[RMDB]
This 177-nucleotide RNA was probed chemically with 2A3 and DMS.
The RNA was probed in 150 mM KOAc, 10 mM MgCl2 and 150 mM bicine (pH 8.5) at 24 C.
DMS adducts were read by reverse transcription with MarathonRT.
Values cover nucleotides 27 to 126.
The data come from the RNA Mapping Database (RMDB), library M2PK50.
The 2A3 profile rests on 3,154 reads.
RNA sequence: GGGAACGACUCGAGUAGAGUCGAAAACAUGUGUACUUCGGUACACAUGAAAUGACCGCCAUUAAUGGCUAAGGCUACACGGACGGCCGGGUCAAAUGCCGAAAAUCGUUGCGUUCGCGCAACGAAAUCAUUUGUUGAGGUUCGCCUCAACAAAUGAAAAAGAAACAACAACAACAAC
Reactivity to 2A3 in 0.01 (KOAc 150mM, MgCl2 10mM, bicine 150mM(pH8.5), 24C), signal-to-noise 3, nucleotides 027 to 126: c000a010u000g020u000g010u000a010c010u020u050c210g120g020u010a000c000a000c000a000u000g000a010a000a020u090g000a010c010c020g040c000c000a140u230u240a220a150u220g020g000c140u160a180a110g030g030c010u010a020c140a020c060g040g020a010c010g010g000c010c000g000g000g000u020c010a010a020a020u100g000c000c020g000a100a000a000a010u030c000g000u000u010g010c010g000u030u070c290g010c000g000c070a000a000c000g000a020a000a000
Reactivity to DMS in 0.01 (KOAc 150mM, MgCl2 10mM, bicine 150mM(pH8.5), 24C), signal-to-noise 2, nucleotides 027 to 126: c000a000u000g010u020g000u000a000c000u000u030c180g040g000u000a000c000a000c000a000u010g000a080a110a080u000g000a020c000c010g020c000c000a120u000u020a120a090u000g000g000c000u000a080a050g010g030c010u000a040c130a070c020g000g000a000c000g000g000c000c000g000g000g000u000c020a040a050a010u000g000c000c000g000a160a040a140a070u000c000g020u000u000g010c010g000u000u020c180g010c010g010c000a000a020c010g000a000a060a060